An RNA of 177 nucleotides, treated with 2A3 and DMS and read out base by base.
Source: RMDB library OK1LIB, as collected in RNAgym.
The RNA was probed in 150 mM KOAc, 10 mM MgCl2 and 150 mM bicine (pH 8.5) at 24 C.

RNA sequence: GGGAACGACUCGAGUAGAGUCGAAAAAGUGGACGGUUAUGGCUGAUCGUAUGAUGGAUGGUGAUACAGUUGGCAAGACGAGUAACAAUCCUUUAAUGCCACCAGUAGAUACCGGUGAAUCGAUAGGCGUGCACAAUCAGUUCGCUGAUUGUGCACGAAAAGAAACAACAACAACAAC
Reactivity to 2A3 in 0.01 (KOAc 150mM, MgCl2 10mM, bicine 150mM(pH8.5), 24C), signal-to-noise 2, nucleotides 027 to 126: a000g220u130g000g000a050c000g060g000u100u090a000u090g050g000c110u160g070a070u030c000g060u180a080u070g060a000u230g100g090a090u050g000g020u000g050a000u000a100c000a000g000u060u050g020g010c050a010a000g050a040c000g010a000g030u120a140a150c080a090a080u210c000c000u050u090u000a190a050u000g000c060c010a010c000c030a000g020u010a020g010a010u070a250c030c000g000g060u180g000a070a010u160c010g140a080u010a020g110g000
Reactivity to DMS in 0.01 (KOAc 150mM, MgCl2 10mM, bicine 150mM(pH8.5), 24C), signal-to-noise 2, nucleotides 027 to 126: a000g030u010g000g040a030c040g020g050u000u000a080u010g040g050c040u000g020a090u040c110g000u000a050u010g000a090u010g010g040a060u010g000g000u000g000a080u000a030c060a060g050u010u020g000g030c000a020a120g090a030c300g000a160g000u000a070a130c240a040a070u050c120c000u000u020u020a090a300u000g000c060c020a030c010c030a060g050u000a040g000a130u040a010c030c080g000g030u000g070a050a080u000c060g000a060u020a070g000g010